[RMDB]
RNA sequence: GGGAACGACUCGAGUAGAGUCGAAAACGGUAGUUGACAUUUCAGAAGUUCAAGAUUUUGAAGUGACAGUUGGAUGGGGUCAAUCUUCAUCCUACAGAGAAAAUUGUUUUUACUCUGGCAUAGGUCCAAUGUUUGCUCCUACACCACUUCUAUACAAGAUUACAGUUACGUUCGCGUAACUGUAAUCAAAAGAAACAACAACAACAAC
Reactivity to 2A3 in 0.01 (KOAc 150mM, MgCl2 10mM, bicine 150mM(pH8.5), 24C), signal-to-noise 4, nucleotides 027 to 156: c030g020g050u070a020g020u070u090g030a040c010a040u040u060u070c040a050g040a150a030g050u150u200c110a100a100g050a250u050u080u120u060g040a040a000g010u030g060a040c070a060g040u140u040g060g020a040u050g010g000g000g000u120c060a050a090u040c030u040u070c030a040u000c010c000u010a010c010a010g020a000g030a020a020a020a040u120u130g130u080u060u020u050u050a130c000u000c010u000g080g000c060a060u060a080g050g000u010c040c040a050a020u060g020u020u030u040g010c010u010c020c000u020a030c040a020c030c010a020c020u090u050c030u110a130u060a090c060a050a060
Reactivity to DMS in 0.01 (KOAc 150mM, MgCl2 10mM, bicine 150mM(pH8.5), 24C), signal-to-noise 1, nucleotides 027 to 156: c060g040g000u010a050g040u000u000g010a150c010a020u000u000u000c000a070g030a050a050g020u020u020c150a170a160g000a200u000u000u000u000g010a040a020g030u010g000a160c050a180g000u000u000g010g020a030u010g020g000g000g000u010c150a090a120u000c020u000u010c020a060u000c050c000u000a100c010a080g000a130g000a070a040a040a090u010u000g010u010u010u000u000u010a120c060u000c000u000g020g000c060a070u000a020g010g000u020c030c050a080a110u000g000u000u000u000g040c000u000c010c000u000a030c080a040c000c000a020c020u000u020c060u000a160u010a120c150a050a220

The record gives the reactivity of an RNA of 207 nucleotides to 2A3 and DMS. Values cover nucleotides 27 to 156. It was measured as part of the RMDB library OK3TST. 2A3 adducts were read by reverse transcription with SuperScript II with manganese. The DMS profile rests on 2,594 reads.